[RMDB]
RNA sequence: GGGAACGACUCGAGUAGAGUCGAAAAGAUAUGGAUCGCACAGUUCAACAGCUGUGAGAUCGGAAACGAUCUACAGACAUGAACGUGCGAUCCUAAGUCAAAAUCGGCCUCCUUCGGGAGGCCGAAAGGUAUGUAAACUCUUCGGAGUUUACAUACCAAAAGAAACAACAACAACAAC
Reactivity to 2A3 in 0.01 (KOAc 150mM, MgCl2 10mM, bicine 150mM(pH8.5), 24C), signal-to-noise 3, nucleotides 027 to 126: g000a000u020a000u030g000g000a000u000c010g020c010a000c030a120g020u000u000c160a300a290c100a300g010c030u020g040u060g190a060g020a030u000c000g010g020a000a000a000c000g000a000u000c010u020a000c000a000g040a030c160a300u300g000a010a000c010g000u000g000c010g010a000u000c000c000u000a000a000g000u000c010a010a010a000a300u040c000g000g000c000c010u000c000c020u070u050c160g150g000g000a000g050g040c000c020g000a010a000a000
Reactivity to DMS in 0.01 (KOAc 150mM, MgCl2 10mM, bicine 150mM(pH8.5), 24C), signal-to-noise 2, nucleotides 027 to 126: g000a030u000a000u000g000g000a010u000c010g030c000a000c000a140g030u010u000c010a140a120c200a190g030c000u000g000u000g000a020g010a010u010c010g020g000a000a020a020c010g020a000u010c010u000a020c000a000g010a030c060a290u010g010a000a010c000g000u000g000c010g000a020u000c010c000u000a000a050g010u000c010a130a070a140a140u010c000g010g000c010c000u000c010c000u000u010c250g020g030g020a000g000g010c000c000g000a000a010a050

Chemical mapping of a 177-nucleotide RNA with 2A3 and DMS. Values are in units of 0.01, from 0 to 300, in steps of 10. The data come from the RNA Mapping Database (RMDB), library TTRDES. For 2A3, 6,415 sequencing reads were counted. Conditions: 150 mM KOAc, 10 mM MgCl2 and 150 mM bicine (pH 8.5), 24 C.